Structure probing data (DMS and 2A3) for a 177-nucleotide construct.
The DMS profile rests on 1,017 reads.
Reactivities are given for positions 27 through 126.
The RNA was probed in 150 mM KOAc, 10 mM MgCl2 and 150 mM bicine (pH 8.5) at 24 C.
Source: RMDB library TTRDEL, as collected in RNAgym.
[RMDB]
RNA sequence: GGGAACGACUCGAGUAGAGUCGAAAAGAUAUGGACCAGAACUACAGGGCGGAAACAGCGAAGAACUCGGAAACGAGGGAGCUGUGGGCCUGCUGGUCCUAAGUCAAAAGAAGGGUUCGCCCUUCAACAACGGAUACAGCUUCGGCUGUAUCCGUUGAAAAGAAACAACAACAACAAC
Reactivity to DMS in 0.01 (KOAc 150mM, MgCl2 10mM, bicine 150mM(pH8.5), 24C), signal-to-noise 2, nucleotides 027 to 126: g030a040u000a300u020g000g010a030c000c000a030g010a130a080c130u030a230c150a090g010g010g010c030g000g000a180a100a020c000a000g000c010g010a090a080g000a090a170c000u000c000g010g000a120a090a180c020g000a050g000g000g010a140g000c000u000g010u010g010g000g000c010c000u000g000c010u000g000g010u040c000c030u000a010a060g010u010c030a030a060a080a130g000a000a000g000g000g010u000u010c180g030c000c010c010u010u000c000a060a150
Reactivity to 2A3 in 0.01 (KOAc 150mM, MgCl2 10mM, bicine 150mM(pH8.5), 24C), signal-to-noise 1, nucleotides 027 to 126: g010a090u080a070u250g000g000a000c030c000a010g000a120a060c090u300a110c180a290g050g120g000c040g150g000a130a240a110c040a030g100c000g220a300a020g120a220a110c000u000c010g050g050a000a110a010c030g000a010g000g000g000a080g000c000u000g030u000g030g100g020c000c020u000g000c030u000g000g030u050c000c000u020a010a000g040u010c060a040a040a070a050g020a000a000g080g030g040u060u210c270g140c060c020c150u000u000c010a010a000